[RMDB]
RNA sequence: GGGAACGACUCGAGUAGAGUCGAAAAAACGAAUCAGGAGAAAGAAUUCAACAAACUUUCCGAAAGACACAUGCAUGUACAGCUUCAAUUAGAUAAUCUCAGGUUAGAAAACGAAAAGCUGCUUGAGCUAAGAACGAGAUUUCGAUCUCGUUCUUAGAAAAGAAACAACAACAACAAC
Reactivity to DMS in 0.01 (KOAc 150mM, MgCl2 10mM, bicine 150mM(pH8.5), 24C), signal-to-noise 3, nucleotides 027 to 126: a070a070c080g000a080a050u000c080a090g000g000a140g000a050a050a040g000a100a100u000u010c140a080a070c140a080a080a080c040u000u000u000c030c000g020a130a070a090g000a040c070a060c090a040u030g000c030a050u000g010u000a080c050a020g000c020u000u000c050a110a050u000u000a040g000a160u000a020a030u010c010u000c150a050g010g000u000u000a000g010a120a050a010a040c120g000a090a080a050a030g020c010u000g000c030u000u000g010a060g020
Reactivity to 2A3 in 0.01 (KOAc 150mM, MgCl2 10mM, bicine 150mM(pH8.5), 24C), signal-to-noise 2, nucleotides 027 to 126: a000a020c080g050a020a010u120c030a070g180g110a170g090a140a030a030g060a050a050u200u120c080a020a040c060a090a110a040c020u000u060u000c000c010g070a110a030a030g040a010c030a000c000a080u150g070c010a010u070g030u210a070c000a030g020c020u050u090c000a080a110u060u040a040g040a110u100a110a120u030c060u020c030a030g080g000u040u190a040g000a070a080a020a050c080g020a000a000a020a110g010c020u030g010c000u000u040g010a010g000
The record gives the reactivity of an RNA of 177 nucleotides to DMS and 2A3. DMS adducts were read by reverse transcription with MarathonRT. For 2A3, 1,486 sequencing reads were counted. 2A3 adducts were read by reverse transcription with SuperScript II with manganese. The data come from the RNA Mapping Database (RMDB), library OK2TRN.